[RMDB]
RNA sequence: GGGAACGACUCGAGUAGAGUCGAAAAAUUUUGAUGUCUGAAGACGUUAAGUUAAACCCUUCAGAAGAUUUUAUAAAGCACGUCCGCACUAAUGGUGGUUACAAUUCUUGGCAUUUAGUCGAGGGUGUAGUGAGCAAAAUUUCGAUUUUGCUCACUAAAAAGAAACAACAACAACAAC
Reactivity to 2A3 in 0.01 (KOAc 150mM, MgCl2 10mM, bicine 150mM(pH8.5), 24C), signal-to-noise 3, nucleotides 027 to 126: a010u220u250u110u110g110a080u070g050u010c010u100g020a040a020g000a000c060g010u080u100a000a090g000u000u170a130a080a030c000c050c000u070u010c000a000g050a140a060g020a010u040u030u090u090a260u120a070a120a000g130c050a030c060g070u000c000c010g100c060a040c050u050a100a120u160g160g000u010g000g030u060u060a090c030a050a050u170u090c070u060u030g030g020c030a130u180u060u130a080g000u040c060g030a080g000g000g010u040g000
Reactivity to DMS in 0.01 (KOAc 150mM, MgCl2 10mM, bicine 150mM(pH8.5), 24C), signal-to-noise 3, nucleotides 027 to 126: a030u010u010u000u000g000a100u050g010u020c010u000g010a030a060g020a050c180g010u000u000a060a120g010u030u030a060a040a070c030c010c000u000u000c020a030g010a060a050g000a110u000u010u020u010a040u020a070a100a100g000c050a060c100g000u010c020c010g020c050a060c070u030a050a050u020g000g000u010g000g000u020u000a030c100a060a060u000u010c030u000u000g000g010c000a140u030u020u050a090g010u000c000g010a020g000g000g000u000g000

Structure probing data (2A3 and DMS) for a 177-nucleotide construct. For 2A3, 2,001 sequencing reads were counted. Conditions: 150 mM KOAc, 10 mM MgCl2 and 150 mM bicine (pH 8.5), 24 C.